About this RNA
The record gives the reactivity of an RNA of 177 nucleotides to DMS and 2A3. It was measured as part of the RMDB library OK1LIB. The RNA was probed in 150 mM KOAc, 10 mM MgCl2 and 150 mM bicine (pH 8.5) at 24 C.
[RMDB]
RNA sequence: GGGAACGACUCGAGUAGAGUCGAAAACGGCACGGUCGGGGUCCGGGUGCCCAAAGGCACCGCUGACGGCCGCAUUCUGCGUGUGCGCGGACGCGGUGUGCCCAAGCGCAGUGGGGGUAGCGGCGACUACCCUCCAUAGAUUCGUCUAUGGAGGGUAAAAAGAAACAACAACAACAAC
Reactivity to DMS in 0.01 (KOAc 150mM, MgCl2 10mM, bicine 150mM(pH8.5), 24C), signal-to-noise 9, nucleotides 027 to 126: c150g010g010c030a040c050g010g020u010c030g000g000g010g010u020c050c080g010g000g000u000g010c000c010c120a050a100a110g010g010c020a020c000c000g010c030u000g000a240c070g000g010c030c020g010c020a040u020u020c060u010g010c070g010u020g010u020g000c050g020c030g000g000a190c300g000c010g010g010u010g000u010g000c020c020c040a120a120g010c080g000c030a060g010u010g010g000g000g010g000u010a070g010c050g010g000c050g010a100c150
Reactivity to 2A3 in 0.01 (KOAc 150mM, MgCl2 10mM, bicine 150mM(pH8.5), 24C), signal-to-noise 9, nucleotides 027 to 126: c030g020g010c040a020c060g070g050u100c040g000g030g020g020u030c040c030g040g010g020u030g010c010c010c010a090a120a060g030g000c010a000c010c000g010c030u050g040a050c030g050g020c070c010g000c000a040u110u070c040u120g030c030g050u120g040u060g060c090g000c010g040g010a010c020g010c010g020g030u070g030u080g030c000c000c010a080a040g040c040g000c050a030g020u070g020g020g000g000g010u030a020g030c020g040g000c010g010a010c030